[RMDB]
RNA sequence: GGGAACGACUCGAGUAGAGUCGAAAAGGGGAUCUCCCUGGAUCCCCCGGCCAUCUGCCACUGGUCCCUGGUCCCCACGCUGCACCAGAUGGUCAUCGUGGAAGACACCCACGAGGACGCCAGGACAAGAACUUACAUGGUUCGCCAUGUAAGUUCUAAAAGAAACAACAACAACAAC
Reactivity to 2A3 in 0.01 (KOAc 150mM, MgCl2 10mM, bicine 150mM(pH8.5), 24C), signal-to-noise 1, nucleotides 027 to 126: g010g000g000g030a040u020c070u110c080c060c070u070g020g000a050u030c000c000c000c000c000g000g050c000c000a060u030c080u080g040c020c030a090c070u060g050g010u000c040c000c010u000g010g000u020c010c010c000c000a020c030g060c040u060g000c010a040c020c010a080g020a300u080g050g000u020c020a020u000c010g010u000g000g000a030a070g090a060c040a070c040c010c000a030c020g000a070g000g000a030c030g000c030c010a000g030g010a000c030a070
Reactivity to DMS in 0.01 (KOAc 150mM, MgCl2 10mM, bicine 150mM(pH8.5), 24C), signal-to-noise 3, nucleotides 027 to 126: g020g010g000g020a030u000c040u010c130c120c080u000g010g020a070u000c000c000c000c010c070g000g000c030c040a070u020c040u010g000c030c060a070c120u010g020g000u010c030c040c020u000g010g010u000c010c040c000c070a070c140g010c080u000g000c080a060c050c020a100g000a080u000g020g020u010c010a060u000c020g020u000g000g030a140a120g000a120c200a060c100c000c030a030c030g000a070g000g000a050c090g000c040c040a040g000g000a120c140a090
Structure probing data (2A3 and DMS) for a 177-nucleotide construct. Conditions: 150 mM KOAc, 10 mM MgCl2 and 150 mM bicine (pH 8.5), 24 C. DMS adducts were read by reverse transcription with MarathonRT.